RNA sequence: GGGAACGACUCGAGUAGAGUCGAAAAAUUACUGACGCACAGUUGGAAACCGUGUAUCGUCGUCAGUAUUGGGAUAAGGUGCAUGGCGCUGAGUUGCCGGACGGCGUUGACUUUGCGGUAUUUGAUUAUGCGGUGAAUAGCGGGCCAUCCAGAGCGGCGUGUUAGAAAUCUUCGGAUUUCUAACACGAAAAGAAACAACAACAACAAC
Reactivity to DMS in 0.01 (KOAc 150mM, MgCl2 10mM, bicine 150mM(pH8.5), 24C), signal-to-noise 1, nucleotides 027 to 156: a130u020u000a040c020u000g010a040c030g000c050a060c040a040g000u010u000g020g000a210a110a110c040c000g030u000g020u030a040u000c050g050u000c000g020u000c020a060g030u000a060u000u010g040g000g010a100u000a100a180g000g020u000g020c020a130u000g040g010c040g000c020u000g000a210g030u000u000g050c000c000g030g000a090c050g020g020c030g060u000u000g010a090c070u000u010u020g000c060g000g050u000a070u000u010u010g010a160u000u010a050u000g010c000g000g030u000g010a080a130u000a090g010c030g000g050g020c050c020a080u010c030c030a120g020a090g020c040g030g020
Reactivity to 2A3 in 0.01 (KOAc 150mM, MgCl2 10mM, bicine 150mM(pH8.5), 24C), signal-to-noise 2, nucleotides 027 to 156: a000u110u080a000c020u030g020a000c010g090c010a020c000a110g000u080u050g170g030a070a080a030c030c020g020u010g020u080a160u120c060g050u030c020g030u010c030a010g060u060a090u060u120g000g000g020a020u050a130a060g020g000u030g040c080a130u060g070g020c030g000c000u010g040a010g120u060u090g080c000c040g010g050a030c030g020g030c030g010u010u090g040a020c030u110u040u080g020c030g000g020u030a080u010u080u130g050a060u010u120a050u170g060c030g000g020u050g080a050a040u040a070g020c040g010g010g000c010c000a040u020c020c010a000g030a000g040c020g030g000